[RMDB]
RNA sequence: GGGAACGACUCGAGUAGAGUCGAAAAAGGGGUGCAUUCCGAGUGCCUGAGCUGGUCGACGUCCAGCUCCCUCGGGACCACGCUGCUCUGGGCGGAAGAGUCUUCUGACUUUUCUAGCCUAUUCAGCUUCGCGUCCUUGAGGCCUGGCGUAACGCGGCCCUAGUAGAUACUUCGGUAUCUACUAGGGAAAAGAAACAACAACAACAAC
Reactivity to DMS in 0.01 (KOAc 150mM, MgCl2 10mM, bicine 150mM(pH8.5), 24C), signal-to-noise 2, nucleotides 027 to 156: a070g000g030g010g010u000g010c070a200u010u000c110c120g000a130g030u010g000c030c000u020g000a030g030c000u020g060g010u000c040g030a300c130g010u000c010c000a030g010c010u000c010c000c000u000c000g040g000g000a030c060c030a060c140g020c010u000g020c040u000c060u010g000g010g010c020g000g000a030a020g000a010g010u010c000u000u000c300u000g030a020c000u000u010u000u000c010u000a090g020c000c000u000a010u000u010c000a040g030c000u000u000c060g030c120g010u000c020c020u010u010g030a030g020g050c070c040u000g020g020c040g020u010a110a090c060g020c050g020g010
Reactivity to 2A3 in 0.01 (KOAc 150mM, MgCl2 10mM, bicine 150mM(pH8.5), 24C), signal-to-noise 5, nucleotides 027 to 156: a000g070g000g000g000u100g030c050a060u170u080c100c070g030a040g040u060g010c040c040u050g010a010g000c030u030g040g020u110c090g090a160c050g070u080c010c010a010g000c000u090c000c000c000u000c000g030g000g000a000c000c000a060c090g000c000u000g000c000u000c000u010g000g010g000c010g000g000a010a000g010a000g010u010c010u250u140c230u300g020a010c000u010u000u020u000c010u050a230g000c000c010u000a000u050u120c000a000g000c000u040u070c130g020c090g000u010c030c000u040u300g000a000g000g000c000c020u020g010g000c030g050u080a070a040c050g000c010g040g030